Background
An RNA of 177 nucleotides, treated with DMS and 2A3 and read out base by base. DMS adducts were read by reverse transcription with MarathonRT. For 2A3 the reverse transcriptase was SuperScript II with manganese. Conditions: 150 mM KOAc, 10 mM MgCl2 and 150 mM bicine (pH 8.5), 24 C. Values cover nucleotides 27 to 126.
[RMDB]
RNA sequence: GGGAACGACUCGAGUAGAGUCGAAAAGAGGAGGGCGGAAAAAGAGGAGCGGGCCUCCCGAUCCGAGGGGCCCGGUGGCCUGAUCUGGAGGGCACUCCGGGCCGUAAGGAAGAAAAGCACCCAGAGGCACAAUAACAAUGUUCGCAUUGUUAUUGUGAAAAGAAACAACAACAACAAC
Reactivity to DMS in 0.01 (KOAc 150mM, MgCl2 10mM, bicine 150mM(pH8.5), 24C), signal-to-noise 3, nucleotides 027 to 126: g020a130g000g010a070g010g010g020c070g020g000a060a060a070a120a090g000a120g010g010a110g000c080g010g000g010c050c010u000c010c020c020g010a090u000c020c040g000a300g000g000g000g010c010c010c020g000g000u000g000g000c020c000u000g020a150u010c160u010g000g000a240g000g000g010c020a110c010u000c000c000g010g010g000c020c000g000u010a010a130g010g010a060a110g010a060a070a080a070g010c140a100c050c020c010a080g010a120g010g010
Reactivity to 2A3 in 0.01 (KOAc 150mM, MgCl2 10mM, bicine 150mM(pH8.5), 24C), signal-to-noise 1, nucleotides 027 to 126: g110a030g000g020a010g020g010g030c040g020g110a030a110a010a000a050g050a100g030g000a020g060c030g020g000g010c020c000u000c010c010c000g040a050u060c000c000g010a020g020g070g000g010c000c000c000g030g020u000g000g000c000c000u020g010a070u040c040u080g100g060a110g030g010g000c030a120c170u000c010c000g000g020g030c010c010g010u000a000a010g010g020a010a000g060a030a060a020a010g040c020a050c000c000c010a010g020a050g080g010